[RMDB]
RNA sequence: GGGAACGACUCGAGUAGAGUCGAAAAUAGCAGGACAUAGCGGUUAUGCGCGAAGCGGUGUAGCGUCACUUUGAUGGCGGUACUAUGAAUUGAUGCAAGGUGUGGAGCGACCUUAAACAGUUCUGGUUUGACGGCUUUCAGUUCGCUGAAAGCCGAAUAUACGUAGCACUUUCGAGUGCUACGUAUAAAAAGAAACAACAACAACAAC
Reactivity to 2A3 in 0.01 (KOAc 150mM, MgCl2 10mM, bicine 150mM(pH8.5), 24C), signal-to-noise 4, nucleotides 027 to 156: u120a010g040c050a020g000g000a040c050a080u080a020g020c010g000g030u100u070a070u210g070c060g010c020g030a050a010g030c040g020g040u080g010u030a030g090c000g020u020c010a030c090u150u160u230g170a260u090g030g000c010g020g070u010a010c030u040a060u120g070a070a070u070u050g030a040u090g060c030a000a040g000g010u010g030u070g040g010a020g000c020g010a000c000c010u090u150a130a080a020c010a020g010u020u000c000u030g010g070u040u110u150g080a040c000g000g000c000u010u000u000c000a010g020u020u060c160g020c080u000g000a000a000a000g000c000c000g000a000a000
Reactivity to DMS in 0.01 (KOAc 150mM, MgCl2 10mM, bicine 150mM(pH8.5), 24C), signal-to-noise 1, nucleotides 027 to 156: u000a100g020c030a020g010g020a130c090a130u000a030g020c040g000g010u010u000a080u020g010c000g000c030g000a080a160g050c040g030g000u000g020u000a070g010c080g020u000c000a020c080u000u000u000g010a140u000g070g020c000g020g000u000a100c070u020a060u020g010a070a150u000u000g000a130u010g000c050a090a040g000g030u000g020u010g020g000a080g000c000g000a180c040c020u000u010a010a050a070c080a090g020u010u000c030u010g000g000u000u000u000g010a210c000g000g020c010u000u000u000c000a030g010u000u000c300g010c080u000g020a010a000a040g010c000c010g000a010a020